Annotation:
Structure probing data (2A3 and DMS) for a 177-nucleotide construct.
[RMDB]
RNA sequence: GGGAACGACUCGAGUAGAGUCGAAAAAACAGAUUACUCCAAGUAGGCCUAAGGCGGUGCGCCAUGAAAAAUAUUCAACCAAAAUACCCAUACCGACACGGCCCAUCAUGCCACCAAAGGCUGUACAAUUACCAUCACUGUUCGCAGUGAUGGUAAUAAAAGAAACAACAACAACAAC
Reactivity to 2A3 in 0.01 (KOAc 150mM, MgCl2 10mM, bicine 150mM(pH8.5), 24C), signal-to-noise 2, nucleotides 027 to 126: a000a000c100a030g070a070u120u140a110c010u010c080c010a070a060g030u050a040g050g010c020c010u130a090a060g050g030c020g010g010u030g010c060g000c040c010a030u060g060a090a060a000a030a000u090a050u060u140c060a100a110c060c040a040a040a020a130u150a040c000c000c000a040u060a060c000c050g030a000c020a000c070g060g000c030c020c010a010u010c000a000u060g000c000c000a020c000c000a130a030a070g040g020c020u050g000u000a010c030a040
Reactivity to DMS in 0.01 (KOAc 150mM, MgCl2 10mM, bicine 150mM(pH8.5), 24C), signal-to-noise 3, nucleotides 027 to 126: a040a040c070a020g030a140u000u000a090c100u000c000c080a100a140g030u010a120g010g000c020c010u020a120a200g010g020c140g000g030u000g000c260g000c080c030a040u010g000a000a060a100a040a070u000a050u000u000c060a040a110c070c100a020a070a110a040u010a080c040c040c040a060u000a090c080c020g000a100c030a020c090g000g000c000c020c030a070u000c070a080u010g010c020c020a060c040c070a080a140a030g000g010c000u020g010u000a030c140a060
Description: 2A3 adducts were read by reverse transcription with SuperScript II with manganese. It was measured as part of the RMDB library OK2TST.